[RMDB]
RNA sequence: GGGAACGACUCGAGUAGAGUCGAAAAGAUGAGCCAACUGCCGAACGAGGGGUACGCGGGAGGAAGGAUCACAUGACGAGAGGGAGUGUAUGGCAAGAGGCGGGGAACGCCGAGUAGGGUUCUCUCCCAAGAAGGUGAAGAGAAGGCAAGAAUCGGAACAUAUCGGUUAGUUCGCUAACCGAUAUGUAAAAGAAACAACAACAACAAC
Reactivity to DMS in 0.01 (KOAc 150mM, MgCl2 10mM, bicine 150mM(pH8.5), 24C), signal-to-noise 2, nucleotides 027 to 156: g000a080u000g020a100g050c000c030a090a110c090u000g030c050c030g000a180a100c080g020a110g010g000g010g040u010a060c080g050c090g050g030g020a130g000g020a130a100g000g010a100u010c040a110c120a200u000g010a200c100g000a110g030a110g010g010g020a080g040u020g020u000a070u000g000g000c080a090a100g000a120g020g060c070g020g020g030g030a040a070c050g020c010c040g020a100g040u010a050g020g030g010u000u000c040u000c020u000c040c000c010a080a140g010a060a100g010g030u020g010a120a050g000a050g010a090a050g020g020c040a040a100g000a090a120u010c010g000g000a140
Reactivity to 2A3 in 0.01 (KOAc 150mM, MgCl2 10mM, bicine 150mM(pH8.5), 24C), signal-to-noise 6, nucleotides 027 to 156: g080a050u130g020a020g030c030c020a020a060c080u090g040c050c030g070a110a060c060g020a070g000g030g010g020u080a060c080g010c070g000g020g030a050g020g010a050a050g020g010a040u090c040a050c020a110u190g060a060c080g010a010g010a050g080g040g000a060g000u100g000u050a090u090g040g000c060a060a010g030a030g060g010c080g010g010g000g020a060a010c030g080c110c010g020a050g070u210a060g030g010g000u080u010c030u010c020u020c000c020c000a020a030g080a020a010g030g020u060g010a070a020g020a010g010a030a030g030g010c040a040a020g030a050a070u080c060g010g020a020